Chemical mapping of a 177-nucleotide RNA with 2A3 and DMS. The data come from the RNA Mapping Database (RMDB), library TTRDES. Reactivities are given for positions 27 through 126.
RNA sequence: GGGAACGACUCGAGUAGAGUCGAAAAGAUAUGGAAUACACCUCCGAUAAGCUCGUGUCGGAAACGACACAGAGCUUUUGACGGAGUGUGUAUUCCUAAGUCAAACGCCGUUGUUCGCAACGGCGAAGUUAUGACAAUUCUUCGGAAUUGUCAUAACAAAAGAAACAACAACAACAAC
Reactivity to 2A3 in 0.01 (KOAc 150mM, MgCl2 10mM, bicine 150mM(pH8.5), 24C), signal-to-noise 4, nucleotides 027 to 126: g020a000u040a030u100g010g000a000a000u000a010c000a000c000c010u000c000c030g130a200u080a230a010g000c000u000c000g010u010g000u000c010g020g010a050a070a030c010g000a000c010a010c100a060g010a000g000c010u010u010u020u050g120a070c040g020g000a010g020u100g000u000g000u010a000u000u000c000c000u000a000a000g000u010c010a040a040a140c010g000c010c000g000u020u000g040u080u100c300g000c220a000a000c000g000g000c000g010a010a000
Reactivity to DMS in 0.01 (KOAc 150mM, MgCl2 10mM, bicine 150mM(pH8.5), 24C), signal-to-noise 5, nucleotides 027 to 126: g010a040u000a300u000g010g010a020a010u000a010c000a010c010c000u000c010c000g020a170u000a020a010g010c000u000c000g030u000g010u000c010g010g010a100a060a160c010g000a010c000a000c000a100g020a010g010c000u000u000u000u010g010a300c120g000g000a020g010u010g010u000g000u000a000u000u000c000c000u000a020a050g000u000c020a120a120a300c010g000c000c010g000u000u000g010u000u010c220g010c000a000a000c000g000g000c000g020a000a030